[RMDB]
RNA sequence: GGGAACGACUCGAGUAGAGUCGAAAAGUGGUACAUCAUGCUAGAGGUACGAUCGAUCGAUCUACUCAUGAUCUGCGUACCGAUCUGACACGUACGUACCAGGUACACAUGGUGUCAUGACAGAGUCACCCAAGCCGAAGUUCGCUUCGGCUUGGGUAAAAGAAACAACAACAACAAC
Reactivity to 2A3 in 0.01 (KOAc 150mM, MgCl2 10mM, bicine 150mM(pH8.5), 24C), signal-to-noise 2, nucleotides 027 to 126: g080u080g010g070u110a020c010a020u030c020a010u050g050c010u060a000g030a030g090g000u000a000c010g030a110u040c060g010a020u030c010g010a020u000c040u060a070c000u050c090a080u150g050a050u040c010u040g030c030g000u000a030c030c010g020a010u000c030u090g040a000c010a020c190g050u160a020c020g000u010a040c040c010a040g020g040u050a010c020a010c010a070u000g020g010u050g010u020c020a040u060g010a020c040a050g110a020g100u040c000
Reactivity to DMS in 0.01 (KOAc 150mM, MgCl2 10mM, bicine 150mM(pH8.5), 24C), signal-to-noise 2, nucleotides 027 to 126: g010u010g010g020u030a000c010a020u020c010a030u000g000c110u000a110g010a100g010g020u000a010c010g000a210u020c110g010a170u000c030g010a060u000c070u000a020c020u010c090a120u000g010a030u020c050u010g040c090g010u000a020c080c030g000a020u000c030u010g000a030c070a020c080g010u010a070c120g040u010a020c030c040a040g010g000u000a100c220a090c040a000u000g050g000u010g020u000c030a040u000g030a140c090a110g000a130g000u010c170

Chemical mapping of a 177-nucleotide RNA with 2A3 and DMS. For DMS the reverse transcriptase was MarathonRT. The data come from the RNA Mapping Database (RMDB), library OK2TRN. The reactions ran in a buffer of 150 mM KOAc, 10 mM MgCl2 and 150 mM bicine (pH 8.5), at 24 C. For 2A3, 1,704 sequencing reads were counted.